[RMDB]
RNA sequence: GGGAACGACUCGAGUAGAGUCGAAAACGCUGAAGGUUUGUGUCAGGGCGCUAGAGCCCCGCUAGCUUGACACGACCUUACGAUUGGGUUUUCGAGCUAGGCAGCGAUCAGCCGAGAUCGAGCCCGGAGAGCACUACAUAUUCGUAUGUAGUGCUCUAAAAGAAACAACAACAACAAC
Reactivity to 2A3 in 0.01 (KOAc 150mM, MgCl2 10mM, bicine 150mM(pH8.5), 24C), signal-to-noise 9, nucleotides 027 to 126: c110g010c120u130g040a020a010g070g000u130u300u300g010u150g000u010c020a020g020g150g100c110g010c070u040a020g010a060g060c010c000c010c000g010c010u020a020g010c020u020u020g000a000c000a000c010g010a010c000c000u000u020a050c030g090a130u110u230g000g000g040u050u060u040u030c010g000a020g010c020u040a050g070g010c030a050g070c090g210a200u150c090a030g010c000c000g010a020g010a110u010c000g000a000g000c000c000c000g000g020
Reactivity to DMS in 0.01 (KOAc 150mM, MgCl2 10mM, bicine 150mM(pH8.5), 24C), signal-to-noise 4, nucleotides 027 to 126: c010g010c090u010g010a020a010g000g000u000u010u050g040u000g010u010c020a030g000g020g080c220g010c030u000a020g000a080g000c010c010c000c000g000c020u000a030g000c030u030u000g010a010c020a010c000g000a020c000c000u000u000a020c100g000a190u030u020g010g010g000u000u000u010u000c000g000a030g000c020u000a080g010g010c040a150g000c170g010a110u040c160a170g000c000c020g000a040g020a050u000c020g010a040g020c000c000c000g010g000
Notes
This 177-nucleotide RNA was probed chemically with 2A3 and DMS. The reactions ran in a buffer of 150 mM KOAc, 10 mM MgCl2 and 150 mM bicine (pH 8.5), at 24 C. For DMS the reverse transcriptase was MarathonRT. It was measured as part of the RMDB library OK1LIB.